This 207-nucleotide RNA was probed chemically with DMS and 2A3. Source: RMDB library OK3TST, as collected in RNAgym. For DMS, 1,973 sequencing reads were counted.

RNA sequence: GGGAACGACUCGAGUAGAGUCGAAAAGAACGUGAUCGAGUUCGAGUUCUCACUCGAGAGUGUUCGUUCGAUCACGUUCACGAACUCUCGAGUACGAGAGUACUCGAACACUCUCGAACACACACGAGUUCGAGUGAUCGUACGAACGUGAGUACUCGUCAUGAGAGUGUUUCGACACUCUCAUGACAAAAGAAACAACAACAACAAC
Reactivity to DMS in 0.01 (KOAc 150mM, MgCl2 10mM, bicine 150mM(pH8.5), 24C), signal-to-noise 1, nucleotides 027 to 156: g020a000a030c040g010u010g000a060u000c010g030a130g000u000u000c010g020a030g040u000u000c000u020c050a180c070u000c090g040a080g010a080g020u000g030u000u000c020g010u010u010c000g000a030u010c000a040c000g050u010u000c010a150c030g010a020a030c000u020c010u000c040g000a190g000u000a060c020g030a230g000a140g000u020a030c050u000c020g000a060a130c050a110c040u000c010u000c010g060a020a060c010a110c160a170c120a080c150g000a090g010u020u000c000g030a100g030u000g010a080u010c020g000u020a070c000g000a090a100c020g040u000g050a120g020u000a080c060u010c020
Reactivity to 2A3 in 0.01 (KOAc 150mM, MgCl2 10mM, bicine 150mM(pH8.5), 24C), signal-to-noise 3, nucleotides 027 to 156: g010a010a000c000g000u010g010a000u010c010g000a010g060u210u120c030g000a000g020u030u020c010u020c010a040c060u180c110g040a030g000a010g030u050g080u070u020c020g010u000u010c000g000a000u010c000a000c010g000u000u000c000a000c000g000a020a000c000u010c000u000c010g010a040g070u090a110c030g020a020g000a000g040u040a020c030u040c020g040a060a020c020a030c020u000c000u010c000g040a080a010c040a000c020a000c010a030c140g120a040g080u030u040c010g000a020g020u050g040a170u080c080g030u090a070c060g050a180a020c080g050u090g020a010g010u020a020c010u020c030